Conditions: 150 mM KOAc, 10 mM MgCl2 and 150 mM bicine (pH 8.5), 24 C. Chemical mapping of a 207-nucleotide RNA with 2A3. Reactivities are given for positions 27 through 156. The data come from the RNA Mapping Database (RMDB), library RNAMAK.
RNA sequence: GGGAACGACUCGAGUAGAGUCGAAAACGCACCUUCGGGUGCGACCUAACCUUUGUGAAGCGACAUGCUCUGGAUCUUGCGGUAACCCAUUGGGUUACCGACCCAAGCGCACAGAGCAACAGCGCUUCACUCUGGUAAUGAUGGGGUUCGCCCCAAAUGAAAAGGGUGCAUUCGUGCACCCUUUUCAAAAAGAAACAACAACAACAAC
Reactivity to 2A3 in 0.01 (KOAc 150mM, MgCl2 10mM, bicine 150mM(pH8.5), 24C), signal-to-noise 1, nucleotides 027 to 156: c020g000c000a000c000c000u030u150c300g120g010g000u000g000c000g030a030c000c000u050a040a070c000c000u020u010u000g010u000g000a000a000g000c000g160a160c070a080u080g030c000u000c000u000g010g030a100u050c000u000u000g080c000g000g000u000a010a010c000c020c110a300u260u300g030g000g010u000u000a000c000c000g000a010c000c000c000a020a020g010c050g000c050a020c020a030g000a020g040c000a000a000c010a000g000c000g000c000u000u000c000a000c000u000c000u000g010g010u010a020a090u240g060a060u030g000g010g010g000u080u130c140g030c000c040c040c000a000a020a300